[RMDB]
RNA sequence: GGGAACGACUCGAGUAGAGUCGAAAAACAAAGUAUGGCGUGGUUGCAAGCUCCGUGUUAUUGGAAUCGCUCAGGAGUCUGAUAACAACGUGAAGAUGCAGGAAGAUCUGCAAAAGUACGUCUAUCACGAGUAUACUGGGUUCGCCCAGUAUACUCGAAAAGAAACAACAACAACAAC
Reactivity to DMS in 0.01 (KOAc 150mM, MgCl2 10mM, bicine 150mM(pH8.5), 24C), signal-to-noise 2, nucleotides 027 to 126: a070c020a070a100a070g010u020a050u010g010g020c030g020u000g010g000u000u010g010c100a090a160g000c050u000c050c010g010u010g000u000u010a000u000u000g000g000a040a020u000c050g010c120u000c280a110g000g010a050g000u010c000u010g010a020u000a010a000c060a050a110c020g000u000g010a060a110g000a160u000g010c010a010g010g000a120a100g020a080u020c010u010g000c020a000a100a040a060g010u000a000c020g010u000c020u000a090u010c060a150
Reactivity to 2A3 in 0.01 (KOAc 150mM, MgCl2 10mM, bicine 150mM(pH8.5), 24C), signal-to-noise 2, nucleotides 027 to 126: a000c050a040a080a000g080u050a060u120g050g000c000g000u020g050g090u100u140g040c080a100a050g030c010u050c000c040g030u000g000u070u050a030u030u000g000g020a000a050u050c050g020c150u180c170a100g210g070a010g000u010c000u050g010a020u030a020a030c100a020a020c050g060u050g080a030a000g030a000u090g020c020a000g040g060a170a120g060a210u000c010u080g000c000a090a020a020a000g220u020a020c020g020u000c010u040a080u100c040a030

This 177-nucleotide RNA was probed chemically with DMS and 2A3.
DMS adducts were read by reverse transcription with MarathonRT.
2A3 is a SHAPE reagent: it acylates the 2'-hydroxyl of flexible nucleotides of all four kinds.
For 2A3 the reverse transcriptase was SuperScript II with manganese.
The data come from the RNA Mapping Database (RMDB), library OK2TST.
The 2A3 profile rests on 1,228 reads.